[RMDB]
RNA sequence: GGGAACGACUCGAGUAGAGUCGAAAAGUCCUUCCUCGCGCCCGCAGGACCACCCCUCGCCCCCUUUGCGCUGUCGCUUCGGCUACUACCCGGUGGAAACAACUGAAGCUCCCGAGAACCGCUUUUUCUCUAUCUUACUUGCUUCGGGGCGAGGGUGCAUCCCAAUAAUGUUCGCAUUAUUGGGAUGAAAAGAAACAACAACAACAAC
Reactivity to DMS in 0.01 (KOAc 150mM, MgCl2 10mM, bicine 150mM(pH8.5), 24C), signal-to-noise 2, nucleotides 027 to 156: g020u000c020c030u000u000c020c000u000c050g010c050g020c040c040c030g050c090a130g000g000a040c010c020a110c100c020c000c020u000c020g030c000c010c010c000c050u000u020u000g010c040g030c040u000g050u000c100g040c040u010u000c040g040g020c020u000a120c040u000a190c040c010c040g010g060u010g000g000a190a160a150c060a070a140c070u010g010a060a140g000c030u000c020c030c040g010a100g020a060a090c120c040g000c090u000u000u000u000u000c060u000c030u000a090u000c080u000u010a090c050u000u010g010c030u000u000c040g020g010g010g030c010g010a030g020g010g020u000g010
Reactivity to 2A3 in 0.01 (KOAc 150mM, MgCl2 10mM, bicine 150mM(pH8.5), 24C), signal-to-noise 3, nucleotides 027 to 156: g020u030c000c020u040u070c030c040u060c040g060c040g070c010c060c020g020c050a030g000g050a030c030c010a040c000c040c000c000u010c000g000c010c020c010c030c040u030u090u060g020c040g020c060u070g030u070c020g020c050u000u020c010g020g010c000u020a030c010u020a010c050c030c020g010g010u040g010g030a070a150a010c040a040a030c050u030g000a010a000g020c010u010c050c040c040g020a030g020a060a040c030c030g050c110u090u110u010u080u020c030u000c000u020a070u060c020u030u050a100c010u020u090g070c020u040u070c020g000g000g000g000c000g000a000g040g000g000u000g020
The record gives the reactivity of an RNA of 207 nucleotides to DMS and 2A3. DMS adducts were read by reverse transcription with MarathonRT. The DMS profile rests on 4,903 reads. The RNA was probed in 150 mM KOAc, 10 mM MgCl2 and 150 mM bicine (pH 8.5) at 24 C. It was measured as part of the RMDB library VIROID. For 2A3 the reverse transcriptase was SuperScript II with manganese.